[RMDB]
RNA sequence: GGGAACGACUCGAGUAGAGUCGAAAAAUACCCGGGCUGGUAAGCAGGCGGGUAACCGGACGGCGGAUACGCCGGGGGCGGGUGGUUGGCCAUCGGCGAAGAUGCCGGCGGCGCCCAAGGAGCGUCACACUCCUCUACAGUUCGCUGUAGAGGAGUGAAAAGAAACAACAACAACAAC
Reactivity to DMS in 0.01 (KOAc 150mM, MgCl2 10mM, bicine 150mM(pH8.5), 24C), signal-to-noise 2, nucleotides 027 to 126: a120u000a030c000c000c000g000g000g010c020u000g000g000u000a080a110g010c030a040g000g000c030g020g010g010u000a030a070c030c020g000g000a130c030g000g030c010g000g000a300u000a070c010g020c020c010g010g010g000g000g010c050g000g000g030u000g010g000u000u000g020g010c020c010a020u010c010g000g010c010g010a050a080g010a300u000g010c010c000g010g000c030g020g000c110g000c000c020c020a170a080g000g000a090g020c050g010u010c080a210
Reactivity to 2A3 in 0.01 (KOAc 150mM, MgCl2 10mM, bicine 150mM(pH8.5), 24C), signal-to-noise 1, nucleotides 027 to 126: a000u080a030c000c000c000g020g010g010c020u030g000g200u050a060a080g220c000a030g070g000c020g040g030g010u020a060a040c000c000g040g050a040c010g000g000c000g020g020a100u080a150c000g000c010c000g010g000g010g020g000c030g030g080g070u070g040g060u100u240g140g000c000c010a010u030c000g000g000c000g020a080a010g060a020u080g030c000c000g010g000c010g000g000c020g040c010c020c010a020a080g050g000a090g070c050g080u100c010a020
Structure probing data (DMS and 2A3) for a 177-nucleotide construct. The DMS profile rests on 1,764 reads. The reactions ran in a buffer of 150 mM KOAc, 10 mM MgCl2 and 150 mM bicine (pH 8.5), at 24 C. Reactivities are given for positions 27 through 126. Source: RMDB library OK2TRN, as collected in RNAgym. For DMS the reverse transcriptase was MarathonRT. 2A3 adducts were read by reverse transcription with SuperScript II with manganese.